Conditions: 150 mM KOAc, 10 mM MgCl2 and 150 mM bicine (pH 8.5), 24 C. Chemical mapping of a 207-nucleotide RNA with 2A3 and DMS. For DMS the reverse transcriptase was MarathonRT. Reactivities are given for positions 27 through 156.
[RMDB]
RNA sequence: GGGAACGACUCGAGUAGAGUCGAAAAUACCGCAGGCCUGCGGUGCGGCAGUGUGGAGACCUGCCAUAAGCCGUGUUGUUUUGACAACCGGGAGAAAGCGUAUGCGGAGGCAGCGCUUUCAGGGUCUAAAAGUAUGGGAUCUUCGGAUCCCAUACAACCUAAUGCACAUGUUCGCAUGUGCAUUAGGAAAAGAAACAACAACAACAAC
Reactivity to 2A3 in 0.01 (KOAc 150mM, MgCl2 10mM, bicine 150mM(pH8.5), 24C), signal-to-noise 6, nucleotides 027 to 156: u090a010c010c000g000c010a010g000g060c010c040u040g010c020g010g020u020g020c050g010g000c000a020g020u040g010u100g240g040a050g030a080c000c010u020g010c000c010a040u090a040a010g030c020c020g060u070g010u130u000g010u010u100u080u260g080a020c010a020a010c000c000g020g000g010a040g000a000a000a000g000c000g000u040a300u180g010c040g040g090a050g260g020c000a000g000c000g000c000u000u000u010c000a010g020g000g000u000c010u030a050a060a040a030g000u000a000u000g000g000g000a000u000c010u010u040c160g100g000a000u000c010c000c000a000u000a000c000a000a000
Reactivity to DMS in 0.01 (KOAc 150mM, MgCl2 10mM, bicine 150mM(pH8.5), 24C), signal-to-noise 1, nucleotides 027 to 156: u010a120c020c020g010c020a100g010g040c070c020u000g050c080g000g020u010g010c010g060g020c040a060g040u000g020u000g030g010a240g010a070c210c010u010g000c000c030a090u000a040a190g020c000c010g010u000g010u000u000g010u000u000u000u000g020a080c020a030a030c010c000g000g010g000a150g000a040a030a020g020c000g020u000a110u010g000c050g010g010a260g050g010c000a160g020c000g000c000u000u000u000c010a090g000g050g030u000c030u020a040a110a110a130g030u000a010u000g010g010g000a000u020c000u000u020c300g050g020a020u000c000c010c000a000u000a000c000a050a100